[RMDB]
RNA sequence: GGGAACGACUCGAGUAGAGUCGAAAAUAUACAUCGGAAGUCGGCACAACACCGGACUCGCGGUGAGCGAUGCAGCGUAGCUUAUGCUACGCAGCUGCUGUGCGGAUGGCUAGCAAAUGCUAGCCUCACGCCCAGUAGCUUUCGAGCUACUGGGCGUAAAAGAAACAACAACAACAAC
Reactivity to DMS in 0.01 (KOAc 150mM, MgCl2 10mM, bicine 150mM(pH8.5), 24C), signal-to-noise 2, nucleotides 027 to 126: u030a070u030a120c150a060u030c010g040g000a060a110g020u010c010g030g000c060a040c120a190a170c080a100c010c000g000g030a040c120u000c090g010c020g000g020u020g000a080g000c050g020a050u020g010c050a060g010c000g000u000a000g020c000u030u000a080u020g020c000u000a040c000g000c030a000g020c020u010g000c000u000g010u000g000c000g000g000a040u020g000g000c020u000a000g010c000a190a090a190u000g000c000u000a000g000c000c040u010c090
Reactivity to 2A3 in 0.01 (KOAc 150mM, MgCl2 10mM, bicine 150mM(pH8.5), 24C), signal-to-noise 2, nucleotides 027 to 126: u230a000u030a000c020a040u050c060g080g000a080a020g030u060c000g040g010c020a010c010a050a150c060a000c010c030g260g020a140c020u010c120g150c010g020g020u000g020a000g000c020g210a110u130g000c010a010g000c020g000u010a000g000c020u300u210a210u300g000c000u010a000c000g000c000a000g010c020u060g000c000u000g020u030g000c000g040g050a030u080g000g000c000u010a000g000c020a100a270a200u270g000c000u010a000g000c000c000u000c020